[RMDB]
RNA sequence: GGGAACGACUCGAGUAGAGUCGAAAACCCCCAAGUUUCGACUUGGGGGAAUUUAAAUCAGCGGUAAAUAAUUAGCUCGCGUUACCGCUGAACGCGAGCAUAGAGCAAUGCGCUUCGGCGCAUUGAAGCAAUAAGCAAGUUUCGACUUGCUUAUUGCAAAAGAAACAACAACAACAAC
Reactivity to DMS in 0.01 (KOAc 150mM, MgCl2 10mM, bicine 150mM(pH8.5), 24C), signal-to-noise 2, nucleotides 027 to 126: c000c000c000c010c000a010a010g000u010u000u030c180g020a030c000u010u000g000g010g000g010g000a010a010u010u000u010a050a090a080u000c000a010g010c000g010g000u010a030a040a030u000a030a020u000u000a110g020c000u000c000g010c010g000u000u000a080c050c000g000c010u000g000a010a010c010g010c000g010a020g030c010a120u010a060g000a150g000c000a010a010u000g010c000g000c000u000u000c270g030g010c000g000c000a000u000u000g010a070a120
Reactivity to 2A3 in 0.01 (KOAc 150mM, MgCl2 10mM, bicine 150mM(pH8.5), 24C), signal-to-noise 3, nucleotides 027 to 126: c000c010c000c000c000a000a010g000u000u050u130c170g070a010c010u000u000g000g000g000g000g010a000a030u120u140u080a060a090a040u030c000a000g030c010g230g250u270a070a070a040u080a020a110u130u170a060g010c000u000c010g020c000g020u000u030a140c010c000g000c010u010g000a010a000c000g000c010g000a000g020c000a020u090a020g130a010g040c000a000a010u000g000c000g000c000u020u050c270g070g000c010g000c000a000u000u010g000a000a010

Chemical mapping of a 177-nucleotide RNA with DMS and 2A3. The DMS profile rests on 2,751 reads. For 2A3, 4,957 sequencing reads were counted. 2A3 adducts were read by reverse transcription with SuperScript II with manganese. The reactions ran in a buffer of 150 mM KOAc, 10 mM MgCl2 and 150 mM bicine (pH 8.5), at 24 C.